The record gives the reactivity of an RNA of 207 nucleotides to 2A3 and DMS.
Values cover nucleotides 27 to 156.
RNA sequence: GGGAACGACUCGAGUAGAGUCGAAAACAGAUGGAAAUUGGCUCAAGUGUGUCUCUGACACCAAUUACCAAGAAAAAGGAUUAGGUGGGGUCCAAGGUGUCAGGGCAGUGCCCAUGUUGGGAGCUGAGGAAGGAGGCUGCUCAGAUGCCAGCCCCGAAUGAUAUCCAGGUUUCGACCUGGAUAUCAUAAAAGAAACAACAACAACAAC
Reactivity to 2A3 in 0.01 (KOAc 150mM, MgCl2 10mM, bicine 150mM(pH8.5), 24C), signal-to-noise 3, nucleotides 027 to 156: c020a020g080a080u070g040g070a060a040a050u060u070g000g000c020u010c160a090a120g070u060g020u010g080u110c030u010c050u290g020a020c010a000c040c010a040a060u140u130a090c010c020a030a040g180a040a090a050a010a000g130g000a090u120u220a050g070g030u080g010g030g030g010u050c060c030a060a040g000g000u010g010u000c010a000g000g000g000c000a000g010u040g050c000c040c010a050u200g050u130u190g040g010g010a060g030c020u040g040a060g050g040a070a060g050g050a060g070g000c010u010g010c010u020c010a030g000a040u040g020c000c000a010g020c000c000c000c000g010a010
Reactivity to DMS in 0.01 (KOAc 150mM, MgCl2 10mM, bicine 150mM(pH8.5), 24C), signal-to-noise 1, nucleotides 027 to 156: c010a160g030a160u000g000g000a010a130a090u000u000g020g070c050u010c090a090a130g030u000g050u010g030u010c030u000c050u020g020a120c040a030c010c020a060a060u010u010a130c060c050a040a160g020a030a050a100a080a100g020g010a180u000u000a040g010g060u000g030g020g050g080u000c020c050a050a070g030g020u000g030u000c030a060g010g000g000c050a040g000u000g010c040c000c010a140u010g020u020u000g030g000g020a070g060c020u040g010a130g040g030a100a110g010g000a140g010g010c000u000g000c020u010c040a170g010a060u010g010c000c020a070g000c010c000c000c040g020a140